[RMDB]
RNA sequence: GGGAACGACUCGAGUAGAGUCGAAAAUUCAGAGCCUUCGGGCUCUGAACCGUUUUCCUAGUUCCCAUUAUUGGUAACUCGGUAAUAAAAGGAAAGUUGCCGCAACUUGUUCGUUCGCGAACAAGAAUCUUAUAAAGCGGUUCGCCGCUUUAUAAGAAAAAGAAACAACAACAACAAC
Reactivity to 2A3 in 0.01 (KOAc 150mM, MgCl2 10mM, bicine 150mM(pH8.5), 24C), signal-to-noise 1, nucleotides 027 to 126: u020u020c010a010g000a000g000c000c020u090u070c290g100g010g000c010u040c010u020g000a000a020c020c030g050u010u040u030u040c000c000u000a090g010u010u000c000c000c000a020u080u260a070u110u200g030g000u010a020a020c020u010c100g090g030u100a090a060u090a180a300a060a030g110g000a120a050a040g050u010u030g020c000c010g060c020a030a130c040u020u000g000u000u000c010g030u030u040c270g000c020g120a000a010c000a000a010g000a000a000
Reactivity to DMS in 0.01 (KOAc 150mM, MgCl2 10mM, bicine 150mM(pH8.5), 24C), signal-to-noise 2, nucleotides 027 to 126: u000u000c000a010g000a020g000c000c000u000u000c210g040g030g030c010u010c000u000g010a000a000c090c110g010u000u010u010u010c000c010u000a140g010u010u000c030c000c020a150u020u010a100u000u020g000g000u000a030a040c050u000c040g010g010u000a110a120u000a090a090a120a080g020g010a140a090a020g000u000u000g000c010c020g030c300a090a180c000u000u000g000u000u000c000g020u000u020c200g020c010g010a020a000c000a010a010g000a130a130